[RMDB]
Annotation:
Chemical mapping of a 177-nucleotide RNA with DMS. It was measured as part of the RMDB library RFMREP. The reactions ran in a buffer of 150 mM KOAc, 10 mM MgCl2 and 150 mM bicine (pH 8.5), at 24 C.
RNA sequence: GGGAACGACUCGAGUAGAGUCGAAAAUUUGAUUAUGCAUGAAUCCAUAAUGAUAAAGUGCUAUUGAAUGAUCAAGUAAUUUGUAAGGUUUUUAUUAUCUUCGCAAGAGUUGUAUUGUUAAUUUAGAGUAGUAUAUCUACUUCGGUAGAUAUACUACAAAAGAAACAACAACAACAAC
Reactivity to DMS in 0.01 (KOAc 150mM, MgCl2 10mM, bicine 150mM(pH8.5), 24C), signal-to-noise 3, nucleotides 027 to 126: u010u000u000g010a000u010u010a030u000g020c020a020u000g010a300a030u000c010c110a150u020a200a080u030g010a040u010a020a110a220g010u000g010c000u000a200u030u000g010a130a070u000g010a060u010c030a020a050g000u010a080a120u000u010u000g010u000a060a050g010g010u000u010u010u020u000a020u020u000a020u010c010u000u000c140g030c060a030a060g000a120g000u000u010g020u000a210u000u000g000u010u000a050a210u010u010u000a070g010a300